[RMDB]
RNA sequence: GGGAACGACUCGAGUAGAGUCGAAAACCAGCCUUUGCCAGGGACCUUGACCUAGCACGGACUUGGUCGCCACGCUUAGCUCCCCCUGACCUGCUUUUGAACCCGCUAAUCCACCCCAACUCUUGCCUACCCGAUUAGUUUUCGAACUAAUCGGGUAAAAAGAAACAACAACAACAAC
Reactivity to DMS in 0.01 (KOAc 150mM, MgCl2 10mM, bicine 150mM(pH8.5), 24C), signal-to-noise 5, nucleotides 027 to 126: c010c020a150g010c060c040u000u010u010g010c020c100a130g000g010g000a030c040c040u000u010g000a070c020c010u010a120g020c110a120c170g010g000a100c050u000u010g000g000u000c030g010c050c030a110c140g010c030u000u000a100g010c020u000c020c010c010c030c040u000g000a090c050c010u010g000c040u020u010u020u000g000a100a110c030c010c010g010c060u010a080a080u000c010c030a100c030c020c010c040a080a050c120u020c020u000u000g000c150c060
Reactivity to 2A3 in 0.01 (KOAc 150mM, MgCl2 10mM, bicine 150mM(pH8.5), 24C), signal-to-noise 6, nucleotides 027 to 126: c000c000a010g040c010c030u100u070u090g030c020c050a060g040g000g000a050c010c000u020u110g040a060c010c010u030a050g060c050a040c160g040g020a060c010u030u050g040g000u030c010g060c030c010a030c020g040c020u070u090a040g000c000u050c000c000c000c000c000u010g030a050c000c020u030g030c010u060u060u050u080g020a040a030c000c010c000g000c040u060a030a030u040c020c010a040c010c010c000c000a030a060c030u030c000u030u040g020c000c010
Source information:
The record gives the reactivity of an RNA of 177 nucleotides to DMS and 2A3. Values cover nucleotides 27 to 126. The data come from the RNA Mapping Database (RMDB), libraries RFM100 and RFMREP. The 2A3 profile rests on 8,632 reads.